Structure probing data (DMS and 2A3) for a 177-nucleotide construct. 2A3 adducts were read by reverse transcription with SuperScript II with manganese. The data come from the RNA Mapping Database (RMDB), library OK2TST. The reactions ran in a buffer of 150 mM KOAc, 10 mM MgCl2 and 150 mM bicine (pH 8.5), at 24 C. High DMS reactivity at an A or C suggests that its Watson-Crick edge is free. For 2A3, 771 sequencing reads were counted.

RNA sequence: GGGAACGACUCGAGUAGAGUCGAAAAACUAAAAUGUCACCACCCCAUAAUGUAUUUGAGGUUAUGACUACUAAUAUACGUUUAUUUGGUAUUGGUGGUCAUAGAAAUAUAGCUAUUUCUACUGUUCCUACCUCCCCAUUUUCGAAUGGGGAGGUAGAAAAGAAACAACAACAACAAC
Reactivity to DMS in 0.01 (KOAc 150mM, MgCl2 10mM, bicine 150mM(pH8.5), 24C), signal-to-noise 1, nucleotides 027 to 126: a080c060u030a070a040a160a070u000g000u000c030a110c110c040a090c030c030c010c030a010u020a090a100u000g000u020a050u000u000u000g020a060g010g020u020u000a010u000g010a030c020u000a000c000u000a010a010u000a040u010a080c060g000u000u020u030a140u010u010u000g030g000u010a020u000u000g000g010u000g000g020u000c000a020u010a010g000a010a020a030u000a060u000a070g010c120u020a070u000u000u000c030u010a050c170u010g010u010u000c030
Reactivity to 2A3 in 0.01 (KOAc 150mM, MgCl2 10mM, bicine 150mM(pH8.5), 24C), signal-to-noise 1, nucleotides 027 to 126: a000c050u070a040a040a000a060u200g030u050c030a040c040c010a020c030c010c000c000a020u110a170a070u170g030u040a020u120u060u050g050a020g000g080u000u040a000u060g060a010c030u030a040c010u020a010a010u010a000u010a090c020g030u070u100u150a200u120u240u150g060g010u030a060u000u000g020g030u010g030g000u000c000a000u010a010g010a010a050a000u070a010u030a010g070c010u010a080u030u070u000c050u000a000c030u000g080u080u050c000